[RMDB]
RNA sequence: GGGAACGACUCGAGUAGAGUCGAAAAGAGUGUACCGACACAAACUUAGAUGGUAUAGCUUACUAAACACCUAUGCUAUCUGGUACAGCCUGUUACUCCUGGGCUACAAACCUGUACAGUAUAUUACUAUACUGAAUACCAUAGGAAAAUGUAACACGAGGUAACACUGUUUCGACAGUGUUACCUCAAAAGAAACAACAACAACAAC
Reactivity to 2A3 in 0.01 (KOAc 150mM, MgCl2 10mM, bicine 150mM(pH8.5), 24C), signal-to-noise 2, nucleotides 027 to 156: g100a040g030u070g000u100a060c010c030g090a020c080a020c030a100a280a010c070u230u240a020g000a020u020g000g000u020a000u010a000g040c040u100u100a100c080u290a150a100a030c100a020c010c000u000a000u000g000c000u020a000u000c010u010g000g000u020a020c010a020g060c000c000u030g030u030u050a070c020u020c010c020u020g040g000g000c010u050a040c080a030a120a080c000c050u030g010u070a040c010a000g050u000a000u000a000u030u180a080c110u000a010u010a010c000u020g010a040a060u070a080c050c070a040u130a070g080g000a050a080a090a050u210g020u080a020a030c090a020c190
Reactivity to DMS in 0.01 (KOAc 150mM, MgCl2 10mM, bicine 150mM(pH8.5), 24C), signal-to-noise 1, nucleotides 027 to 156: g120a080g020u000g000u000a040c050c000g000a140c050a100c060a100a060a040c020u000u000a040g050a040u000g010g020u000a020u000a040g040c020u010u020a300c050u040a060a080a060c010a200c100c010u000a010u000g000c010u000a070u000c000u070g060g010u000a010c040a040g010c030c000u000g040u040u000a050c000u010c060c000u000g050g010g140c000u010a060c110a170a000a030c040c060u000g000u000a160c040a000g000u000a000u000a040u000u020a120c120u000a000u000a050c000u010g000a130a070u000a060c040c110a000u000a160g010g000a030a090a110a200u000g010u000a010a110c100a080c120

Description:
This 207-nucleotide RNA was probed chemically with 2A3 and DMS. For DMS, 1,275 sequencing reads were counted. It was measured as part of the RMDB library OK3TST. The 2A3 profile rests on 2,286 reads.